[RMDB]
RNA sequence: GGGAACGACUCGAGUAGAGUCGAAAACUAGAAGGUCUUCUGUUGGCCGUUAAAUAUUUCAGCCAUGAAAUGACACCCAGGUCAUUCAGGCACUCACAACCUAGUAACCAGAACUAGUUACCUUACCCUACUGGUAAGUGUCUGGGACAUGUGGGAACAUGAUGAUAAAUUUCGAUUUAUCAUCAUGAAAAGAAACAACAACAACAAC
Reactivity to 2A3 in 0.01 (KOAc 150mM, MgCl2 10mM, bicine 150mM(pH8.5), 24C), signal-to-noise 6, nucleotides 027 to 156: c030u030a030g050a120a100g100g000u020c040u180u070c100u240g230u220u140g040g000c000c000g010u020u060a040a120a080u180a090u060u160u160c060a010g000c010c030a120u050g040a050a070a020u020g010a010c000a040c050c070c030a040g160g000u000c010a000u040u010c000a010g000g010c020a030c020u070c020a030c010a040a300c020c040u080a030g040u060a100a050c020c020a020g020a060a050c020u030a020g120u080u060a070c000c010u020u060a080c000c000c040u130a150c090u100g030g000u010a040a020g040u060g040u020c010u010g000g010g010a020c030a050u090g020u040g010g000g010a010a030
Reactivity to DMS in 0.01 (KOAc 150mM, MgCl2 10mM, bicine 150mM(pH8.5), 24C), signal-to-noise 6, nucleotides 027 to 156: c050u000a090g020a200a110g020g030u000c020u000u000c070u010g020u000u000g010g020c010c030g010u000u000a080a100a140u000a080u000u000u000c040a090g000c030c020a130u000g010a080a050a080u000g010a060c020a180c090c060c060a150g020g000u000c010a080u000u000c040a060g020g020c020a070c040u000c050a040c040a090a130c050c030u000a070g020u000a050a070c010c040a070g020a110a190c080u000a070g010u000u010a080c080c030u000u000a070c030c010c090u010a140c120u010g010g020u000a020a020g000u000g020u000c030u020g010g010g000a080c060a120u000g010u000g010g030g010a100a300
The data come from the RNA Mapping Database (RMDB), library OK3TST. Structure probing data (2A3 and DMS) for a 207-nucleotide construct. The RNA was probed in 150 mM KOAc, 10 mM MgCl2 and 150 mM bicine (pH 8.5) at 24 C. The DMS profile rests on 15,771 reads. 2A3 is a SHAPE reagent: it acylates the 2'-hydroxyl of flexible nucleotides of all four kinds. For 2A3, 4,720 sequencing reads were counted.